An RNA of 170 nucleotides, treated with 2A3 and DMS and read out base by base. 2A3 is a SHAPE reagent: it acylates the 2'-hydroxyl of flexible nucleotides of all four kinds. It was measured as part of the RMDB library 15KLIB. Reactivities are given for positions 27 through 129. The DMS profile rests on 23,865 reads. The reactions ran in a buffer of 150 mM KOAc, 10 mM MgCl2 and 150 mM bicine (pH 8.5), at 24 C.
[RMDB]
RNA sequence: GGGAACGACUCGAGUAGAGUCGAAAAUUCCUUUCUUCUACCCACUGUUCGAGGAUCUCCUCCCUCUCCUUCGAGGACGGGUUCGCGACGGGUUGGCUCAUCCUGAGAUCGGGGAGCCUCGACGAUCAUACCUACACCUUCGGGUGUAGGAAAAGAAACAACAACAACAAC
Reactivity to 2A3 in 0.01 (KOAc 150mM, MgCl2 10mM, bicine 150mM(pH8.5), 24C), signal-to-noise 9, nucleotides 027 to 129: u040u000c020c000u070u080u040c080u080u020c030u080a120c010c000c020a090c080u150g070u140u030c000g000a000g040g000a120u070c010u000c030c000u030c010c020c000u030c000u020c040c060u150u220c100g080a080g020g010a010c010g040g010g000u060u160c030g010c020g080a140c090g060g060g020u050u070g030g010c010u000c010a060u060c020c030u050g020a020g010a040u070c050g000g000g000g010a000g000c000c010u000c000g010a010c010g010a040u060c020a040u100a120
Reactivity to DMS in 0.01 (KOAc 150mM, MgCl2 10mM, bicine 150mM(pH8.5), 24C), signal-to-noise 5, nucleotides 027 to 129: u030u040c020c060u000u000u000c090u000u000c070u050a090c030c010c010a110c120u090g040u070u020c040g050a030g000g000a100u030c030u020c000c000u000c000c020c100u020c040u000c030c300u070u120c100g020a070g000g000a030c080g030g020g030u050u050c040g040c070g000a070c130g000g000g000u000u000g030g060c000u030c030a120u080c050c050u030g040a050g000a080u040c230g030g020g040g060a000g000c020c010u010c000g010a060c090g000a030u050c070a130u010a160